Structure probing data (DMS and 2A3) for a 177-nucleotide construct. Reactivities are given for positions 27 through 126. The DMS profile rests on 39,353 reads. The reactions ran in a buffer of 150 mM KOAc, 10 mM MgCl2 and 150 mM bicine (pH 8.5), at 24 C.

RNA sequence: GGGAACGACUCGAGUAGAGUCGAAAACUUUCUUGCCGCGCACGUGCACGGAGUGGACACCGUGCGCGCCGCCCUGCAAGAGGUCCCGGUCGCCGACUACGCGCAGCGUUGCGGGGUGGACGAGGAGCAUAUCAAACACAUUCGUGUGUUUGAUAUGAAAAGAAACAACAACAACAAC
Reactivity to DMS in 0.01 (KOAc 150mM, MgCl2 10mM, bicine 150mM(pH8.5), 24C), signal-to-noise 9, nucleotides 027 to 126: c060u000u020u010c000u000u000g010c000c110g020c300g010c050a300c020g010u000g000c000a010c010g000g000a110g010u010g010g010a080c180a070c000c000g000u000g000c000g000c000g000c220c070g010c010c030c010u000g000c010a000a010g010a040g000g000u000c010c000c010g010g020u010c030g010c020c020g000a100c060u010a060c040g000c030g020c080a090g000c090g010u010u000g010c060g010g000g010g020u000g000g010a080c030g000a090g010g010a130g010
Reactivity to 2A3 in 0.01 (KOAc 150mM, MgCl2 10mM, bicine 150mM(pH8.5), 24C), signal-to-noise 9, nucleotides 027 to 126: c030u200u230u040c010u010u020g010c020c030g010c000g000c010a020c020g010u020g010c010a000c010g020g030a090g060u220g080g060a030c020a010c050c000g000u000g000c000g000c000g000c000c020g000c010c020c010u010g000c010a010a010g010a020g020g020u020c010c000c000g010g030u070c030g010c020c000g070a150c040u100a040c050g050c010g020c080a090g040c040g040u060u050g020c030g020g030g020g050u060g060g020a030c040g020a070g050g040a030g050